[RMDB]
RNA sequence: GGGAACGACUCGAGUAGAGUCGAAAAUGUCGGUGCUGUACGCGUGGAACGCCGGAUCGUAUUAUAGAUUGUGCAAAAAACAAGAGCCGUACGUGAUCAACUAUUACGGCGACGUCAAACCAUGGCACUUUGACGACAAAACCAAUCAGACAAUCAACGCUAUAUUGCGGUUCGCCGCAAUAUAGCGAAAAGAAACAACAACAACAAC
Reactivity to 2A3 in 0.01 (KOAc 150mM, MgCl2 10mM, bicine 150mM(pH8.5), 24C), signal-to-noise 3, nucleotides 027 to 156: u090g000u000c010g050g000u040g000c010u010g010u050a050c060g000c010g040u040g000g050a100a040c020g010c020c000g020g000a020u030c010g010u040a050u140u080a090u160a040g080a100u030u080g010u050g040c060a060a060a000a090a090a020c090a080a110g060a020g100c000c020g030u060a030c050g020u050g060a080u150c060a070a070c040u070a040u170u030a040c010g000g020c020g000a010c010g030u030c010a030a010a000c040c030a060u050g020g000c000a000c000u070u000u080g030a020c000g010a000c040a000a040a000a020c010c010a020a020u060c040a020g110a120c050a030a080u090c040a020a090
Reactivity to DMS in 0.01 (KOAc 150mM, MgCl2 10mM, bicine 150mM(pH8.5), 24C), signal-to-noise 1, nucleotides 027 to 156: u000g070u000c000g040g020u040g020c000u000g030u000a040c110g030c140g030u000g040g030a130a220c080g030c000c000g020g020a170u000c000g060u020a070u010u000a100u000a040g000a220u000u010g020u010g010c020a000a030a200a050a000a080c030a090a300g000a220g000c000c070g090u000a020c100g010u020g020a080u000c040a090a140c210u000a140u000u020a000c050g000g000c010g050a020c010g000u000c040a030a110a080c010c060a070u000g040g020c000a040c070u000u000u000g000a030c000g010a280c020a040a040a020a220c060c010a110a050u000c030a190g000a050c140a050a210u060c020a210a020